An RNA of 207 nucleotides, treated with DMS and 2A3 and read out base by base. The DMS profile rests on 3,064 reads. Source: RMDB library OK3TST, as collected in RNAgym.
[RMDB]
RNA sequence: GGGAACGACUCGAGUAGAGUCGAAAACUGUGGGAGGCCAAGGGGGGUGAAUACCUUGAGCUGAAGAUCAGCUUGGACGACAGAGCAAAACCCUGCCUCUACUAAAAAUACGAAAACUAGCUGGGUGUGCACAUCUGUAGUCCUGGCUACUUGGGAAGUAGUAAAUGCUAUUCGUAGCAUUUACUACAAAAGAAACAACAACAACAAC
Reactivity to DMS in 0.01 (KOAc 150mM, MgCl2 10mM, bicine 150mM(pH8.5), 24C), signal-to-noise 2, nucleotides 027 to 156: c050u000g040u010g000g020g000a080g040g020c020c030a060a050g000g010g000g010g000g000u000g010a140a130u010a040c050c000u020u000g010a140g020c030u020g010a090a200g000a210u000c060a040g000c010u000u000g010g020a050c000g030a040c020a040g000a140g020c030a090a110a150a300c040c000c000u000g040c020c010u010c040u000a130c070u000a010a120a060a100a160u000a210c150g010a120a040a030a090c090u020a020g030c030u000g010g000g030u000g040u010g000c150a040c060a190u010c020u010g020u010a050g010u000c000c010u000g000g000c010u000a020c040u000u000g010g030g050a070a240
Reactivity to 2A3 in 0.01 (KOAc 150mM, MgCl2 10mM, bicine 150mM(pH8.5), 24C), signal-to-noise 4, nucleotides 027 to 156: c050u060g000u090g070g020g030a050g050g000c030c050a020a030g040g010g000g010g000g000u080g060a040a040u100a080c000c000u020u030g030a030g030c010u050g030a040a000g030a120u130c020a000g000c000u010u010g000g000a010c000g010a000c020a010g030a010g010c020a000a040a050a110c000c000c000u010g000c010c030u060c030u030a050c020u120a080a070a020a040a050u150a060c070g060a020a040a070a090c040u060a020g010c010u030g010g000g010u040g040u050g000c030a020c020a200u030c020u020g020u020a010g000u010c010c000u000g000g000c000u010a040c030u040u020g050g010g040a100a040